[RMDB]
RNA sequence: GGGAACGACUCGAGUAGAGUCGAAAAUGUGCUGACGGUGGACGUCCACAUCAGCGCUGACACAAGUGCUGGGGCAUUGGAUCCGGAGCCGUCGCCCGGAGCGGAGCGGCUGGUGUCUGAGCGCAGCCGCCUGUGUGGUAUUCGUACCACACAGGCGAAAAGAAACAACAACAACAAC
Reactivity to DMS in 0.01 (KOAc 150mM, MgCl2 10mM, bicine 150mM(pH8.5), 24C), signal-to-noise 4, nucleotides 027 to 126: u010g020u000g000c040u010g020a030c070g000g020u000g000g000a300c240g010u010c010c010a030c060a140u010c000a040g000c010g010c010u000g010a150c210a130c180a140a040g030u010g000c010u000g000g010g010g030c110a090u010u000g010g010a100u000c140c010g000g010a220g000c010c030g010u000c030g020c060c020c060g000g000a100g010c080g000g010a080g020c010g000g010c010u000g010g010u000g020u000c070u010g000a120g010c050g020c010a060g010c080
Reactivity to 2A3 in 0.01 (KOAc 150mM, MgCl2 10mM, bicine 150mM(pH8.5), 24C), signal-to-noise 2, nucleotides 027 to 126: u100g000u010g000c040u060g010a020c140g140g030u040g050g050a090c070g140u040c000c000a010c010a050u030c010a000g030c000g070c030u040g070a010c020a010c030a300a060g030u030g100c010u020g010g000g100g000c070a180u070u130g050g020a050u040c030c030g060g020a030g030c000c000g060u040c040g050c010c010c000g040g040a070g060c100g000g030a060g040c010g000g000c020u040g050g020u070g030u020c070u060g110a040g030c050g010c020a000g000c060
Background:
The record gives the reactivity of an RNA of 177 nucleotides to DMS and 2A3. The data come from the RNA Mapping Database (RMDB), library OK2TST. DMS adducts were read by reverse transcription with MarathonRT. Reactivities are given for positions 27 through 126.